[RMDB]
RNA sequence: GGGAACGACUCGAGUAGAGUCGAAAAAAGCGACGCUGGGCCUUGUAGCUACAUGUGGGAGAGCUACUGAAGCGCGCACGGUAGCUCGAAGAACACAUGACAAGAGCUACUAGGCCUGUGCUGAAGCGCGCACGGCAACCGAAAGGUGCGUAUGAAACGAUAGUGUCAGGUUCGCCUGACACUAUCGAAAAGAAACAACAACAACAAC
Reactivity to 2A3 in 0.01 (KOAc 150mM, MgCl2 10mM, bicine 150mM(pH8.5), 24C), signal-to-noise 1, nucleotides 027 to 156: a000a000g170c070g000a030c010g020c010u010g000g000g000c000c000u000u020g000u000a000g000c000u020a030c000a000u000g000u010g010g000g010a030g010a000g000c000u000a000c000u020g030a120a010g000c010g000c010g000c020a000c010g010g010u000a000g010c000u000c000g020a110a000g010a000a000c000a000c010a000u020g020a020c110a070a140g080a000g110c000u000a000c000u010a000g000g020c000c000u010g000u000g000c010u010g010a120a020g000c010g000c000g040c000a000c000g000g000c000a000a030c000c010g000a060a010a020g040g000u050g010c000g010u030a160u140g100a070a070a010
The record gives the reactivity of an RNA of 207 nucleotides to 2A3. Source: RMDB library RNAMAK, as collected in RNAgym.